[RMDB]
RNA sequence: GGGAACGACUCGAGUAGAGUCGAAAAGCAGCGGCGCCAGUCAUGUCCGAGCCAGGCGCAGCGGAUCGAUCAUCGUCUGGGUAUAACUGGUCCUGUGGAUUUGCAGGUUACCUCGUCGGACGGAUUGCCUACCUCAUGGUUUCGACCAUGAGGUAGGAAAAGAAACAACAACAACAAC
Reactivity to 2A3 in 0.01 (KOAc 150mM, MgCl2 10mM, bicine 150mM(pH8.5), 24C), signal-to-noise 6, nucleotides 027 to 126: g050c080a010g010c030g090g010c010g020c020c020a010g020u030c020a070u150g030u000c020c010g000a020g040c030c020a020g010g000c030g000c040a010g050c030g020g040a090u210c040g030a030u110c040a030u050c030g080u010c020u040g000g000g080u170a080u030a290a090c060u070g020g030u070c000c000u020g000u070g060g160a300u080u090u300g000c000a010g040g000u060u120a050c000c000u080c050g150u010c000g010g020a030c050g010g010a030u060u140g030
Reactivity to DMS in 0.01 (KOAc 150mM, MgCl2 10mM, bicine 150mM(pH8.5), 24C), signal-to-noise 3, nucleotides 027 to 126: g000c050a060g010c060g000g050c040g000c050c030a080g000u010c030a050u030g010u020c000c000g020a080g020c060c030a040g020g000c020g030c200a040g020c010g000g000a040u020c080g020a070u000c070a060u030c000g030u010c000u000g000g020g030u030a100u030a060a050c140u020g000g010u000c010c000u040g020u010g000g020a150u040u030u060g000c030a000g000g000u010u040a040c030c020u000c160g010u010c000g000g000a020c010g020g000a030u000u020g010